[RMDB]
RNA sequence: GGGAACGACUCGAGUAGAGUCGAAAACUGUGGGAGGCCAAGUCGGGUGAAUUUCUUGAGCUGAAGAUCAGCUUGGACGACAGAGCAAAACCCUGCCUCUACUAAAAAUACGAAAACUAGCUGGGUGUGCACAUCUGUAGUCCUGGCUACUUGGGAAGAUUAAUUACUCCUUCGGGAGUAAUUAAUCAAAAGAAACAACAACAACAAC
Reactivity to 2A3 in 0.01 (KOAc 150mM, MgCl2 10mM, bicine 150mM(pH8.5), 24C), signal-to-noise 2, nucleotides 027 to 156: c050u060g000u070g060g010g010a040g050g000c040c030a030a030g030u010c040g030g000g030u050g050a070a090u010u080u050c030u070u070g030a040g010c050u040g070a060a030g030a130u110c030a000g000c000u010u020g000g020a000c010g000a000c020a000g010a020g030c010a010a030a080a100c000c000c000u000g010c000c020u100c040u050a040c010u100a080a040a040a070a070u170a080c050g030a020a050a070a120c070u030a010g000c000u030g020g000g000u030g020u060g040c050a030c010a220u050c020u020g010u020a020g010u000c000c020u010g010g000c010u030a030c010u040u040g030g000g060a050a060
Reactivity to DMS in 0.01 (KOAc 150mM, MgCl2 10mM, bicine 150mM(pH8.5), 24C), signal-to-noise 1, nucleotides 027 to 156: c020u010g000u000g030g000g000a110g040g010c070c030a020a160g020u000c000g010g000g000u000g010a110a060u000u000u000c020u010u000g030a050g000c040u000g000a140a120g040a150u010c040a030g020c020u000u000g060g000a030c020g010a000c020a010g000a080g000c020a110a110a120a300c000c000c000u000g020c000c050u010c040u000a140c070u010a000a050a050a090a160u010a230c080g000a120a120a080a070c040u010a040g000c010u020g020g000g000u000g000u000g020c060a080c100a080u000c040u010g000u000a060g010u000c010c000u000g000g010c000u010a020c040u000u020g060g020g010a140a200
Description: Source: RMDB library OK3TST, as collected in RNAgym. Chemical mapping of a 207-nucleotide RNA with 2A3 and DMS. The RNA was probed in 150 mM KOAc, 10 mM MgCl2 and 150 mM bicine (pH 8.5) at 24 C. For DMS the reverse transcriptase was MarathonRT.